[RMDB]
RNA sequence: GGGAACGACUCGAGUAGAGUCGAAAAGCACGAAUCGUGAAACGAGUUGGGCACUGUCUCAACCAGGCGCUCAGUGAAAUUGUAGUGGCGGUGAAGAUGCCGCCUACCCGCAGAAGGACGGAAAGACCAAUUCUGUGCUAUUCGUAGCACAGAAUUGAAAAGAAACAACAACAACAAC
Reactivity to DMS in 0.01 (KOAc 150mM, MgCl2 10mM, bicine 150mM(pH8.5), 24C), signal-to-noise 6, nucleotides 027 to 126: g010c020a010c040g010a100a100u010c020g010u000g010a120a100a100c120g000a110g010u010u000g000g010g010c020a170c140u020g000u020c030u010c060a040a070c090c030a100g000g010c050g010c050u010c050a150g000u000g010a040a070a110u000u000g010u010a100g010u010g000g000c010g000g000u000g010a080a120g010a110u020g010c000c000g000c000c000u010a010c030c010c020g010c070a080g000a110a100g000g010a100c050g000g000a070a050a080g000a080c160
Reactivity to 2A3 in 0.01 (KOAc 150mM, MgCl2 10mM, bicine 150mM(pH8.5), 24C), signal-to-noise 8, nucleotides 027 to 126: g070c010a000c020g050a040a110u080c040g030u070g100a070a060a050c090g020a080g120u030u000g020g000g010c050a070c270u160g050u120c020u010c040a000a030c020c000a010g060g030c030g000c010u020c040a020g010u030g070a060a100a110u130u100g060u110a110g040u030g050g000c000g000g010u050g050a150a130g100a130u250g050c000c000g000c000c000u010a020c000c000c000g000c010a040g040a180a040g080g020a040c030g010g050a100a080a010g040a020c040
Source: RMDB libraries RFM100 and RFMREP, as collected in RNAgym.
Chemical mapping of a 177-nucleotide RNA with DMS and 2A3.
The RNA was probed in 150 mM KOAc, 10 mM MgCl2 and 150 mM bicine (pH 8.5) at 24 C.